[RMDB]
RNA sequence: GGGAACGACUCGAGUAGAGUCGAAAAGAUAUGGAAACUUAGGGAGACGCGUGGGUCGGAAACGACCUGAAAACGUCUUUGAUCUAAAGUUUCCUAAGUCAAAGCACCUCUCUUCGGAGAGGUGCAAUCACCCAUACUAGUUCGCUAGUAUGGGUGAAAAAGAAACAACAACAACAAC
Reactivity to 2A3 in 0.01 (KOAc 150mM, MgCl2 10mM, bicine 150mM(pH8.5), 24C), signal-to-noise 1, nucleotides 027 to 126: g000a000u010a000u060g020g000a000a010a000c000u000u000a010g010g000g000a040g010a000c020g060c050g100u300g070g000g000u010c010g000g010a020a000a000c000g000a000c030c010u000g020a040a080a020a010c000g010u000c000u100u190u010g000a000u000c000u020a110a160a190g010u000u000u000c000c000u000a000a010g000u000c030a190a080a010g010c000a010c000c000u000c010u000c010u060u110c300g100g000a010g000a000g000g000u000g000c000a020a010
Reactivity to DMS in 0.01 (KOAc 150mM, MgCl2 10mM, bicine 150mM(pH8.5), 24C), signal-to-noise 2, nucleotides 027 to 126: g000a010u000a020u010g000g000a020a010a020c000u000u000a000g000g000g000a010g020a010c000g030c090g010u010g010g020g020u000c010g020g000a010a000a020c010g010a010c010c000u000g010a070a080a170a200c010g010u000c000u000u000u010g010a020u000c000u000a020a040a120g000u000u000u000c000c000u000a000a070g000u000c010a130a170a180g010c000a000c000c000u000c000u000c000u000u010c230g020g010a010g000a010g010g020u010g010c000a000a040